Chemical mapping of a 177-nucleotide RNA with 2A3 and DMS. Reactivities are given for positions 27 through 126.
RNA sequence: GGGAACGACUCGAGUAGAGUCGAAAAGAAAGAGCCGUUGGAUGAUACGCAACACUUGAGGGUUGCUCCUCUCCAAGAUCAUUCUUACGAGAAUGACAUAAGAAUUGUUGGGAGUUAAUACAAUUCGAGGUUUGAGGAUAUUCGUAUCCUCAAACCUAAAAGAAACAACAACAACAAC
Reactivity to 2A3 in 0.01 (KOAc 150mM, MgCl2 10mM, bicine 150mM(pH8.5), 24C), signal-to-noise 4, nucleotides 027 to 126: g070a010a050a010g080a010g120c030c080g010u020u030g040g040a080u070g010a020u150a080c120g020c050a050a040c090a060c090u130u190g070a150g020g200g020u030u020g000c040u000c040c000u020c010u000c010c000a030a020g060a100u020c000a000u000u000c010u080u020a070c240g020a010g010a030a020u010g000a000c010a040u090a040a050g060a090a120u020u030g020u010u030g000g020g020a130g040u060u150a050a020u080a130c010a050a060u010u070c060g020
Reactivity to DMS in 0.01 (KOAc 150mM, MgCl2 10mM, bicine 150mM(pH8.5), 24C), signal-to-noise 2, nucleotides 027 to 126: g000a070a090a020g000a100g010c000c040g060u000u010g000g030a040u080g010a040u030a110c290g000c050a040a040c030a040c120u010u010g010a230g030g020g020u000u000g000c000u010c170c110u000c010u000c020c030a050a060g000a070u020c020a000u010u040c000u010u000a130c180g010a040g040a000a000u000g000a000c160a120u020a050a070g000a040a060u000u000g010u020u000g000g000g000a220g000u020u000a090a130u050a020c070a000a010u020u010c040g010
Record summary
2A3 is a SHAPE reagent: it acylates the 2'-hydroxyl of flexible nucleotides of all four kinds. Values are in units of 0.01, from 0 to 300, in steps of 10. For 2A3, 1,764 sequencing reads were counted.